[RMDB]
Structure probing data (2A3 and DMS) for a 177-nucleotide construct. DMS adducts were read by reverse transcription with MarathonRT. 2A3 adducts were read by reverse transcription with SuperScript II with manganese. Conditions: 150 mM KOAc, 10 mM MgCl2 and 150 mM bicine (pH 8.5), 24 C.
RNA sequence: GGGAACGACUCGAGUAGAGUCGAAAAGGCGAUUAGUAAACAUUUAAAUGUAGAUCAAUCACGCAUUUUAUUUGGUGCGGGAUUAGAUGAAGUUAUAUUAAUGAUUUCUAGAGCAGUAUUAACGCCAUCAAUAUGCGGCAUUCGUGCCGCAUAUUGAAAAAGAAACAACAACAACAAC
Reactivity to 2A3 in 0.01 (KOAc 150mM, MgCl2 10mM, bicine 150mM(pH8.5), 24C), signal-to-noise 4, nucleotides 027 to 126: g070g000c030g030a120u020u030a050g080u170a000a120a030c010a010u040u040u220a080a110a050u120g070u190a050g020a230u000c030a000a000u000c010a010c010g040c010a000u030u030u030u160a300u200u200u300g060g000u000g000c000g010g000g000a010u020u010a090g000a000u040g030a080a020g060u080u070a070u020a010u110u090a080a040u030g130a070u000u020u080c040u080a010g010a040g050c090a030g070u100a100u140u170a050a010c030g010c030c000a010
Reactivity to DMS in 0.01 (KOAc 150mM, MgCl2 10mM, bicine 150mM(pH8.5), 24C), signal-to-noise 3, nucleotides 027 to 126: g000g000c010g010a190u010u010a020g000u020a010a040a050c000a030u010u010u010a060a060a020u000g030u020a110g020a110u000c010a030a000u000c000a010c010g020c000a010u000u030u030u050a130u040u010u040g000g010u000g000c000g000g000g010a010u000u010a030g020a020u010g000a050a120g010u040u010a060u000a100u000u020a010a030u010g010a080u020u010u000c000u000a020g000a170g010c030a060g020u040a040u040u020a110a130c070g010c000c020a220